[RMDB]
RNA sequence: GGGAACGACUCGAGUAGAGUCGAAAAGUGCUCACACUAGACAACCAGGACCUUAAUGGCAAGUGGUAUGAUUUUGGUGACUUCGUAAUCACUCAACCUGGUUCAGGAGUAGCUAUAGUUGAUAGCUGAUAAUGAGGGAGUUCGCUCCCUCAUUAUCAAAAGAAACAACAACAACAAC
Reactivity to DMS in 0.01 (KOAc 150mM, MgCl2 10mM, bicine 150mM(pH8.5), 24C), signal-to-noise 3, nucleotides 027 to 126: g010u010g000c070u000c050a140c090a300c080u000a090g000a090c180a050a060c040c010a020g010g000a240c010c010u000u000a130a100u030g030g030c240a060a050g000u000g000g020u000a070u020g000a030u000u000u000u000g030g010u010g000a070c050u010u010c060g000u000a040a060u000c000a020c020u010c080a050a160c030c020u000g000g000u000u000c070a070g010g000a080g010u000a060g000c000u000a040u000a080g000u010u000g010a110u000a040g020c040u000
Reactivity to 2A3 in 0.01 (KOAc 150mM, MgCl2 10mM, bicine 150mM(pH8.5), 24C), signal-to-noise 2, nucleotides 027 to 126: g070u050g010c030u020c020a130c020a000c070u060a060g010a120c040a040a020c010c010a000g020g020a050c000c030u150u140a190a030u230g040g010c050a080a010g030u000g000g030u060a030u040g040a050u020u030u060u120g190g070u140g010a020c000u000u000c030g010u020a090a030u050c000a010c010u040c020a010a040c010c000u010g000g000u040u020c020a030g000g050a040g020u050a010g000c000u030a000u020a100g070u020u020g110a060u010a010g010c040u030
Structure probing data (DMS and 2A3) for a 177-nucleotide construct. The DMS profile rests on 1,820 reads. The reactions ran in a buffer of 150 mM KOAc, 10 mM MgCl2 and 150 mM bicine (pH 8.5), at 24 C. The 2A3 profile rests on 1,616 reads.